[RMDB]
RNA sequence: GGGAACGACUCGAGUAGAGUCGAAAAGAAGUUGAUUACGUUAACAAGGGCGGCAGUAUUGACGAUCAGGCUUUUAAGGAUGCACAGGCAGCGCAGCAAGCAUUCUAUGAUCAGCAAGACGCCAAUAUGCUAAACUGGAAAGCCGGAUUCAGCAGCGCAUUAUCUUUAGGUUCGCCUAAAGAUAAUGAAAAGAAACAACAACAACAAC
Reactivity to DMS in 0.01 (KOAc 150mM, MgCl2 10mM, bicine 150mM(pH8.5), 24C), signal-to-noise 3, nucleotides 027 to 156: g000a090a160g000u000u000g010a140u010u000a090c070g000u000u010a040a080c040a080a080g000g000g020c070g010g020c000a100g040u010a040u000u000g020a060c020g000a120u010c050a110g040g030c000u010u000u000u000a090a120g000g000a090u000g000c020a150c070a160g020g000c130a140g000c110g050c060a130g020c050a070a180g000c020a040u010u000c030u000a110u020g030a090u000c070a080g050c030a070a160g030a140c010g020c000c020a030a080u000a060u000g000c000u010a030a150a100c030u010g010g010a090a090a110g020c020c030g020g000a230u000u000c040a060g030c050a090g030c090g000
Reactivity to 2A3 in 0.01 (KOAc 150mM, MgCl2 10mM, bicine 150mM(pH8.5), 24C), signal-to-noise 4, nucleotides 027 to 156: g090a090a020g010u040u030g040a070u100u170a040c050g040u070u080a140a040c060a070a050g040g020g000c030g020g000c020a010g100u060a050u050u090g030a030c020g050a110u010c030a030g080g000c030u000u040u020u090a020a030g040g000a000u030g000c010a030c040a110g130g000c040a030g070c100g010c100a040g000c010a070a060g000c010a020u030u000c010u100a150u120g060a050u090c050a010g020c000a010a050g020a020c020g000c020c010a010a020u050a020u040g000c010u050a080a060a090c020u050g060g020a100a060a020g040c020c000g020g010a030u080u040c010a020g010c000a020g010c060g010
An RNA of 207 nucleotides, treated with DMS and 2A3 and read out base by base. The 2A3 profile rests on 2,742 reads. It was measured as part of the RMDB library OK3TST. Conditions: 150 mM KOAc, 10 mM MgCl2 and 150 mM bicine (pH 8.5), 24 C.